RNA sequence: GGGAACGACUCGAGUAGAGUCGAAAAAAAUUUAUCCACCUAACCCCAGAUCACUGCAAACGAAAUGUAUAUCACUAUUCACGCGUGGUUCCAAUUAUGGCGGCUAGAUGACGAAGGCUUGAUCAGCGUUUAUUCCACCUUUCGAGGUGGAAUAAACAAAAGAAACAACAACAACAAC
Reactivity to DMS in 0.01 (KOAc 150mM, MgCl2 10mM, bicine 150mM(pH8.5), 24C), signal-to-noise 2, nucleotides 027 to 126: a120a100a050u050u010u020a030u020c070c000a110c010c000u030a070a110c060c010c050c020a200g030a040u010c070a050c020u010g010c070a040a080a140c140g000a070a080a060u000g010u020a050u020a090u040c060a090c060u010a070u010u000c010a020c030g010c120g060u020g000g000u020u000c010c040a020a090u020u040a080u020g000g000c070g000g000c080u000a010g000a020u010g000a030c050g010a040a080g010g000c020u000u010g000a070u020c020a070g000c130